Structure probing data (2A3 and DMS) for a 177-nucleotide construct.
The RNA was probed in 150 mM KOAc, 10 mM MgCl2 and 150 mM bicine (pH 8.5) at 24 C.
DMS adducts were read by reverse transcription with MarathonRT.
[RMDB]
RNA sequence: GGGAACGACUCGAGUAGAGUCGAAAAUCAGCGUCAGCCGGGGCGCGCGCGUGGGCGAGGGCGCGAAGAUCGGCGAGGUCGGCAGCACCGGCAACGCAACCGGCGAUUGCCUGCACUACGAAGUGCGUGAUGCUCGAAGAUUCGUCUUCGAGCAUCAAAAAGAAACAACAACAACAAC
Reactivity to 2A3 in 0.01 (KOAc 150mM, MgCl2 10mM, bicine 150mM(pH8.5), 24C), signal-to-noise 2, nucleotides 027 to 126: u070c020a010g010c000g040u030c000a020g010c000c000g030g000g020g050c030g010c000g000c020g000c030g050u130g020g040g050c050g030a040g020g060g000c030g020c020g010a030a000g030a100u090c070g010g020c050g050a060g000g030u030c020g000g030c030a050g030c020a020c030c030g020g010c020a000a020c000g000c010a020a070c010c000g040g000c030g110a160u080u200g010c020c010u050g000c010a000c010u150a100c110g160a180a000g000u000g010c030g020
Reactivity to DMS in 0.01 (KOAc 150mM, MgCl2 10mM, bicine 150mM(pH8.5), 24C), signal-to-noise 2, nucleotides 027 to 126: u000c090a170g000c040g040u000c060a140g040c010c020g010g040g000g000c110g000c030g010c050g010c010g020u000g010g030g000c010g020a070g010g000g050c030g010c000g020a150a060g020a060u000c040g020g000c090g010a100g000g010u010c070g000g030c080a160g010c070a200c010c000g000g020c020a130a060c030g010c060a140a110c060c030g000g010c040g010a130u010u000g020c020c010u000g000c010a020c030u020a220c290g010a060a060g040u000g010c000g010